[RMDB]
RNA sequence: GGGAACGACUCGAGUAGAGUCGAAAACGAUUAGCAUUCGUGCUAAUCGAAUCAGGUAGUACCUAUCUCUAUUACCUGUAGUGGCCAACGUGCGGACAGAGAAUCGAGUCCUGUUCGCAGGACUCAACCAUUAGUUGGGCUUCGGCCCAACUAAUGGAAAAGAAACAACAACAACAAC
Reactivity to 2A3 in 0.01 (KOAc 150mM, MgCl2 10mM, bicine 150mM(pH8.5), 24C), signal-to-noise 2, nucleotides 027 to 126: c000g010a000u000u000a010g030c010a000u040u050c180g110u090g020c000u010a000a000u020c000g020a000a090u050c000a000g050g000u010a020g030u010a050c060c030u110a150u150c110u000c000u040a020u060u010a010c010c000u030g000u030a040g090u060g080g020c030c020a070a080c100g100u130g060c030g000g040a060c030a050g080a010g030a050a100u200c080g000a020g010u020c000c000u020g040u040u030c220g000c020a000g010g010a000c000u010c020a010a020
Reactivity to DMS in 0.01 (KOAc 150mM, MgCl2 10mM, bicine 150mM(pH8.5), 24C), signal-to-noise 2, nucleotides 027 to 126: c010g020a020u000u000a000g020c000a010u000u010c210g020u010g020c020u000a000a020u000c010g010a050a060u000c010a010g000g000u000a000g010u000a050c170c180u000a060u010c120u000c130u000a040u000u000a020c000c000u010g000u000a070g000u000g000g020c000c040a100a160c150g010u020g020c070g020g010a050c070a100g000a180g010a120a120u030c190g000a020g000u010c000c000u000g000u020u000c130g030c000a000g010g000a000c020u000c020a090a110

Chemical mapping of a 177-nucleotide RNA with 2A3 and DMS. The reactions ran in a buffer of 150 mM KOAc, 10 mM MgCl2 and 150 mM bicine (pH 8.5), at 24 C. For 2A3 the reverse transcriptase was SuperScript II with manganese. Reactivities are given for positions 27 through 126.